[RMDB]
RNA sequence: GGGAACGACUCGAGUAGAGUCGAAAAUCCCGAUUUCAAAUUGCUACACAAUUUACAAGCAGACAUUUGCUACAAGUUCGUCCUUUGGGAUUAUGAACGUAGCAAUAUUUAUGGUACUGCUACUAUUCACGCUAAACCUUCGGGUUUAGCAAAAGAAACAACAACAACAAC
Reactivity to 2A3 in 0.01 (KOAc 150mM, MgCl2 10mM, bicine 150mM(pH8.5), 24C), signal-to-noise 9, nucleotides 027 to 129: u000c000c000c010g010a080u100u120u060c040a020a040a050u050u040g060c060u290a060c080a020c010a120a090u050u130u220a120c070a110a000g000c010a010g020a020c010a040u020u010u000g000c000u000a000c000a110a150g010u000u000c000g020u000c030c000u100u180u280g170g000g000a020u070u040a070u300g000a000a000c010g000u000a000g000c000a010a000u060a020u020u150u050a060u050g090g030u070a110c010u000g040c010u020a030c020u040a050u070u140c070a020c110
Reactivity to DMS in 0.01 (KOAc 150mM, MgCl2 10mM, bicine 150mM(pH8.5), 24C), signal-to-noise 8, nucleotides 027 to 129: u030c000c000c000g020a110u040u040u040c120a010a010a010u000u000g000c110u110a050c280a210c000a090a050u010u040u080a060c150a100a030g050c010a000g020a070c030a070u000u010u010g020c000u000a000c030a000a150g030u000u000c020g030u030c020c010u030u080u070g060g030g010a030u040u020a010u070g020a010a030c000g000u000a000g000c000a020a010u050a040u030u040u000a050u030g040g010u000a070c000u000g020c000u000a080c140u060a100u060u030c110a080c220

Chemical mapping of a 170-nucleotide RNA with 2A3 and DMS. For 2A3 the reverse transcriptase was SuperScript II with manganese.